[RMDB]
RNA sequence: GGGAACGACUCGAGUAGAGUCGAAAACAUACCCCCUCUGUCUCUAAGGGUGUCUGGACUAUUCCUGCGUCCGAUGCUUUUCCUGCUAGCUCCACAUUCGGCAAUAAGGGGGGAAGUUGCAGAAGGGCAUUACUGUUGCGUUCGCGCAACAGUAAUGAAAAGAAACAACAACAACAAC
Reactivity to 2A3 in 0.01 (KOAc 150mM, MgCl2 10mM, bicine 150mM(pH8.5), 24C), signal-to-noise 9, nucleotides 027 to 126: c040a040u210a140c010c000c000c000c000u030c020u030g050u020c020u000c030u190a110a160g060g010g000u050g040u030c110u170g030g010a020c030u060a100u100u070c010c020u020g020c020g010u000c010c010g010a030u050g010c010u040u050u050u040c010c010u030g080c040u040a040g020c010u040c040c010a090c010a210u150u100c070g020g000c020a050a090u120a220a130g010g000g000g010g010g000a010a040g020u030u040g000c030a010g020a130a060g030g030g010
Reactivity to DMS in 0.01 (KOAc 150mM, MgCl2 10mM, bicine 150mM(pH8.5), 24C), signal-to-noise 4, nucleotides 027 to 126: c130a080u040a180c040c010c000c020c000u000c060u010g000u020c040u010c060u000a110a090g020g010g010u010g010u000c040u030g020g010a100c120u010a150u010u000c020c020u000g000c120g010u000c000c020g020a030u010g000c040u010u000u010u010c000c010u000g000c050u000a040g000c050u010c000c020a080c130a110u010u010c080g010g010c060a080a060u020a110a070g000g000g000g000g000g000a020a050g000u000u010g000c040a040g020a180a080g010g000g010